RNA sequence: GGGAACGACUCGAGUAGAGUCGAAAACGCGAGACCCCUACGGUUGACGGGUUUUUAGAUAAUGAAAGUGCCCUACACCGUCUAGCACUCGCACGGGAGGUGAACAUGCAGGGGUUAGGCGGUUGCGCAUAUCCGGGACGUUCGCGUCCCGGAUAUGAAAAGAAACAACAACAACAAC
Reactivity to 2A3 in 0.01 (KOAc 150mM, MgCl2 10mM, bicine 150mM(pH8.5), 24C), signal-to-noise 4, nucleotides 027 to 126: c070g010c000g000a030g040a080c000c000c030c010u030a030c060g040g010u010u050g030a030c030g000g050g010u000u000u020u040u090a260g040a190u260a130a120u230g130a100a060a070g130u180g080c000c010c000u010a020c020a000c080c000g020u000c010u060a020g000c000a010c040u000c010g000c060a050c100g020g110g010a190g090g090u100g060a110a000c020a050u100g000c040a070g010g000g020g050u000u010a020g060g000c000g050g020u040u110g060c050g000
Reactivity to DMS in 0.01 (KOAc 150mM, MgCl2 10mM, bicine 150mM(pH8.5), 24C), signal-to-noise 3, nucleotides 027 to 126: c100g030c020g030a160g030a020c000c020c020c050u010a080c060g000g010u010u000g010a170c280g000g010g000u000u000u000u000u030a070g000a140u040a060a080u020g000a030a050a060g030u000g000c000c000c030u000a180c160a010c000c000g000u000c110u040a120g020c030a080c010u000c040g060c010a040c040g000g020g000a060g020g000u010g000a080a130c200a110u020g000c030a100g000g000g010g010u000u000a030g010g000c120g010g000u000u000g010c140g010
The data come from the RNA Mapping Database (RMDB), library OK1LIB. The record gives the reactivity of an RNA of 177 nucleotides to 2A3 and DMS. For DMS the reverse transcriptase was MarathonRT. Reactivities are given for positions 27 through 126. For 2A3, 2,253 sequencing reads were counted.